Chemical mapping of a 207-nucleotide RNA with DMS and 2A3.
Conditions: 150 mM KOAc, 10 mM MgCl2 and 150 mM bicine (pH 8.5), 24 C.
2A3 adducts were read by reverse transcription with SuperScript II with manganese.
As a SHAPE reagent, 2A3 marks flexible, mostly unpaired nucleotides at the ribose 2'-OH.
Reactivities are rounded to 0.1 and cut off at 0 and 3.
RNA sequence: GGGAACGACUCGAGUAGAGUCGAAAACUAAAGAGCAACUUUAGGUUGCUGAAAAUGAUUUAUGGGUAGUGGAAUAGGUUAACCGUAAGACCUUUGGUUGAAAUACUAUGAAAUUAAGCCUCAGAUAAAAACGGAGCCACGUUCGCGUGGCUCCGAACAAGUAUAUAACGUUCGCGUUAUAUACUUGAAAAGAAACAACAACAACAAC
Reactivity to DMS in 0.01 (KOAc 150mM, MgCl2 10mM, bicine 150mM(pH8.5), 24C), signal-to-noise 2, nucleotides 027 to 156: c030u000a020a090a110g010a150g030c030a050a050c000u010u000u010a080g030g050u000u000g000c020u010g020a070a080a110a100u000g000a150u000u000u000a100u010g020g020g000u000a100g050u000g000g000a160a080u020a030g030g020u000u000a050a140c040c150g030u010a070a200g000a060c040c020u000u010u000g000g040u010u000g000a090a070a130u000a050c090u000a090u000g000a140a120a100u000u000a070a130g010c000c010u000c060a120g020a110u000a030a020a050a090a140c020g010g010a070g020c010c000a010c020g030u010u020c290g050c050g090u010g010g010c000u010c000c000g010a000a030
Reactivity to 2A3 in 0.01 (KOAc 150mM, MgCl2 10mM, bicine 150mM(pH8.5), 24C), signal-to-noise 3, nucleotides 027 to 156: c020u070a040a000a070g080a030g000c010a000a000c020u170u170u210a190g100g020u000u010g000c000u010g020a020a020a030a110u090g040a050u060u160u250a090u150g030g000g000u050a030g020u020g000g040a070a080u030a090g030g020u040u090a030a030c050c010g030u050a080a040g050a090c020c000u050u040u110g020g000u010u030g010a010a060a040u040a050c030u030a040u100g030a030a070a040u060u070a060a080g040c020c010u020c050a060g050a190u090a090a090a000a050a000c010g000g020a000g010c000c000a010c030g000u040u020c130g000c030g100u010g010g040c000u020c000c010g000a000a000